[RMDB]
RNA sequence: GGGAACGACUCGAGUAGAGUCGAAAAAUGGAAAGCAGCACUCGAGUUUGCUGAAAUUACAUACCUCGGUAUGCAAUAUGCCCAGAAAAUUUGUAAAUGAUAAUUUACAUAACAAUUCAAAACAUAAAGUAGUGAUACGAUUCGUCGUAUCACUACUAAAAGAAACAACAACAACAAC
Reactivity to DMS in 0.01 (KOAc 150mM, MgCl2 10mM, bicine 150mM(pH8.5), 24C), signal-to-noise 3, nucleotides 027 to 126: a100u020g020g010a110a090a070g000c000a030g000c040a090c150u080c200g020a120g020u030u060u020g040c030u000g010a050a090a050u020u010a180c000a030u010a020c010c020u060c250g010g000u000a000u000g020c090a020a040u040a100u030g000c020c010c050a100g000a030a030a060a050u020u010u000g000u000a010a000a030u000g000a170u060a090a060u000u000u000a030c000a020u010a070a070c160a050a070u040u030c090a080a080a110a090c070a040u040a040a150
Reactivity to 2A3 in 0.01 (KOAc 150mM, MgCl2 10mM, bicine 150mM(pH8.5), 24C), signal-to-noise 5, nucleotides 027 to 126: a000u100g030g010a060a080a020g070c050a010g000c010a010c050u220c150g130a100g070u080u160u040g010c000u020g040a080a040a000u080u050a010c000a020u000a030c010c020u050c110g070g000u020a000u030g020c010a010a010u030a050u300g020c020c010c020a020g160a050a140a060a100u040u020u010g010u010a010a000a020u020g080a120u210a200a050u160u000u000a000c000a000u130a100a110c040a130a060u150u190c090a070a080a140a150c080a100u210a150a190
Structure probing data (DMS and 2A3) for a 177-nucleotide construct. Source: RMDB library OK1LIB, as collected in RNAgym. As a SHAPE reagent, 2A3 marks flexible, mostly unpaired nucleotides at the ribose 2'-OH. Conditions: 150 mM KOAc, 10 mM MgCl2 and 150 mM bicine (pH 8.5), 24 C.